Chemical mapping of a 177-nucleotide RNA with DMS and 2A3.
RNA sequence: GGGAACGACUCGAGUAGAGUCGAAAACGAUCCAUAGUGGAUCCGUACACUGAGUACGCGGCCUGUGCGCCUGAUCGGUACUGGCCGUACUGUGAUCUCUCAUCGAGCGCGUGGCCGAGAUAGCGCGCCGUAAAGUACUGUUCGCAGUACUUUACGGAAAAGAAACAACAACAACAAC
Reactivity to DMS in 0.01 (KOAc 150mM, MgCl2 10mM, bicine 150mM(pH8.5), 24C), signal-to-noise 9, nucleotides 027 to 126: c110g010a010u000c000c000a200u010a140g020u000g010g010a010u000c020c030g010u000a030c020a150c210u010g000a150g020u000a020c020g000c040g010g010c010c000u000g020u010g010c030g010c020c020u000g000a050u000c080g000g010u000a020c020u010g010g010c170c110g000u000a010c040u000g010u000g000a100u000c040u000c090u010c100a090u010c090g000a110g010c010g010c010g020u000g000g010c020c020g000a060g000a080u010a100g000c100g010c140g010
Reactivity to 2A3 in 0.01 (KOAc 150mM, MgCl2 10mM, bicine 150mM(pH8.5), 24C), signal-to-noise 9, nucleotides 027 to 126: c020g000a010u000c020c010a090u190a170g260u260g050g000a010u000c070c000g010u030a010c050a030c100u260g090a030g080u030a010c040g010c010g040g030c010c010u130g040u100g060c040g070c030c040u070g060a110u100c050g020g000u020a030c020u080g090g000c020c020g000u010a010c010u030g060u090g080a080u020c050u000c020u010c070a150u070c060g070a070g040c040g000c020g050u030g020g000c030c040g030a040g010a060u120a020g100c110g000c030g000
The RNA was probed in 150 mM KOAc, 10 mM MgCl2 and 150 mM bicine (pH 8.5) at 24 C. DMS adducts were read by reverse transcription with MarathonRT. 2A3 is a SHAPE reagent: it acylates the 2'-hydroxyl of flexible nucleotides of all four kinds. Source: RMDB library OK2TRN, as collected in RNAgym.